The record gives the reactivity of an RNA of 177 nucleotides to 2A3 and DMS. It was measured as part of the RMDB library OK2TST. For 2A3, 2,017 sequencing reads were counted. Reactivities are given for positions 27 through 126. For DMS, 3,845 sequencing reads were counted.
[RMDB]
RNA sequence: GGGAACGACUCGAGUAGAGUCGAAAACUUGGGCCAGUGCAUAGUGCUCAGGGCUUUGAUCAAUGCAGAAAUAAGGUGCGGCAAACAGCUCCUGAAUCAGGAUGAUUUGUGCACCCUUGGCAUGAGCAUUGAGUAGAUCCUUCGGGAUCUACUCAAUAAAAGAAACAACAACAACAAC
Reactivity to 2A3 in 0.01 (KOAc 150mM, MgCl2 10mM, bicine 150mM(pH8.5), 24C), signal-to-noise 2, nucleotides 027 to 126: c010u020u010g030g020g020c000c020a070g040u080g180c050a050u030a170g090u080g170c000u020c020a010g080g050g000c020u120u100u110g060a090u120c090a100a060u010g000c030a010g120a240a110a040u160a070a040g030g000u010g000c050g050g000c030a000a040a000c030a040g080c030u030c010c000u090g100a200a180u210c010a000g000g000a010u030g070a080u020u000u000g030u010g010c020a000c000c000c010u060u040g050g000c030a050u050g020a020g020c010
Reactivity to DMS in 0.01 (KOAc 150mM, MgCl2 10mM, bicine 150mM(pH8.5), 24C), signal-to-noise 4, nucleotides 027 to 126: c030u000u000g010g010g020c020c020a190g000u010g020c160a140u000a120g020u010g030c010u000c030a030g000g010g000c080u000u000u010g000a110u010c050a060a040u010g020c030a100g000a070a110a100u010a100a080g000g000u000g000c020g030g030c030a000a020a010c080a110g000c210u000c010c010u000g010a150a150u010c060a010g000g000a050u000g000a180u000u000u000g010u000g000c000a020c010c020c050u000u000g020g010c050a040u000g020a090g010c130